Structure probing data (2A3 and DMS) for a 177-nucleotide construct. The reactions ran in a buffer of 150 mM KOAc, 10 mM MgCl2 and 150 mM bicine (pH 8.5), at 24 C. Reactivities are rounded to 0.1 and cut off at 0 and 3. For 2A3, 4,315 sequencing reads were counted. It was measured as part of the RMDB library OK2TST. For 2A3 the reverse transcriptase was SuperScript II with manganese. DMS adducts were read by reverse transcription with MarathonRT.
[RMDB]
RNA sequence: GGGAACGACUCGAGUAGAGUCGAAAAGUUCUGUCCGUAACCCUCUUUGCGCGCGCGCGCCAGAAUGGCUUCCAGCUUUAACGGUUCCCGUGCCAGUUGAUAGUCAUCACCGGGGCGGGAGGCUAACUCUGUAUAUCUGGUUCGCCAGAUAUACAGAAAAAGAAACAACAACAACAAC
Reactivity to 2A3 in 0.01 (KOAc 150mM, MgCl2 10mM, bicine 150mM(pH8.5), 24C), signal-to-noise 3, nucleotides 027 to 126: g030u060u050c040u050g080u050c040c010g040u060a090a140c020c020c010u000c030u030u140u160g030c060g000c020g000c000g010c010g000c000g000c020c000a040g030a160a090u060g040g020c000u030u000c020c020a050g000c070u130u110u160a100a020c050g110g030u030u040c000c010c000g000u080g140c020c010a060g030u080u060g080a020u050a070g180u200c090a030u010c010a010c010c030g020g000g040g000c000g000g010g000a000g030g000c030u040a030a030c020
Reactivity to DMS in 0.01 (KOAc 150mM, MgCl2 10mM, bicine 150mM(pH8.5), 24C), signal-to-noise 5, nucleotides 027 to 126: g010u000u000c030u000g010u000c030c030g010u000a100a150c100c020c030u010c070u010u000u000g020c050g020c050g000c150g020c080g000c100g030c060c080a040g000a090a060u010g000g010c080u000u000c040c030a110g000c050u010u000u010a070a120c150g000g000u000u000c020c000c000g020u000g000c030c020a060g000u010u010g010a040u000a130g000u020c100a300u000c020a050c020c030g010g000g000g010c020g000g010g010a020g000g010c040u000a080a090c160